[RMDB]
An RNA of 177 nucleotides, treated with DMS and 2A3 and read out base by base. Values cover nucleotides 27 to 126. Conditions: 150 mM KOAc, 10 mM MgCl2 and 150 mM bicine (pH 8.5), 24 C.
RNA sequence: GGGAACGACUCGAGUAGAGUCGAAAAACACUCUGGCGCUCGACACAUAUCUGCCGCAGCUGAAGGCGCUGUGGAAGUCCUACCAUGACAUCUAUGAUGUGGAUGUGCUUCUGGUGCCCACCACGCCCAGUGCGUUAACGUUCGCGUUAACGCACUGAAAAGAAACAACAACAACAAC
Reactivity to DMS in 0.01 (KOAc 150mM, MgCl2 10mM, bicine 150mM(pH8.5), 24C), signal-to-noise 2, nucleotides 027 to 126: a120c090a080c070u000c050u000g020g010c040g030c070u000c080g020a070c050a050c080a080u000a080u010c070u000g020c010c020g010c020a010g020c010u010g000a140a140g010g000c120g000c020u000g030u000g010g010a070a080g000u010c080c100u000a140c100c090a070u000g010a050c020a040u000c020u010a090u020g000a100u000g020u000g030g010a100u010g010u010g030c040u000u000c090u000g000g000u000g000c000c030c020a080c060c060a060c100g010c030c040
Reactivity to 2A3 in 0.01 (KOAc 150mM, MgCl2 10mM, bicine 150mM(pH8.5), 24C), signal-to-noise 3, nucleotides 027 to 126: a000c050a010c020u070c030u020g050g020c010g020c040u040c060g100a010c010a010c010a160u070a060u070c020u100g020c000c010g000c020a010g010c020u090g040a160a030g180g030c070g000c010u020g010u040g030g010a090a010g030u010c010c020u020a120c020c040a050u160g060a030c010a060u040c060u130a100u200g080a080u110g090u030g070g020a060u050g010u020g030c000u080u050c040u080g030g000u040g030c010c000c010a020c000c000a040c040g010c000c030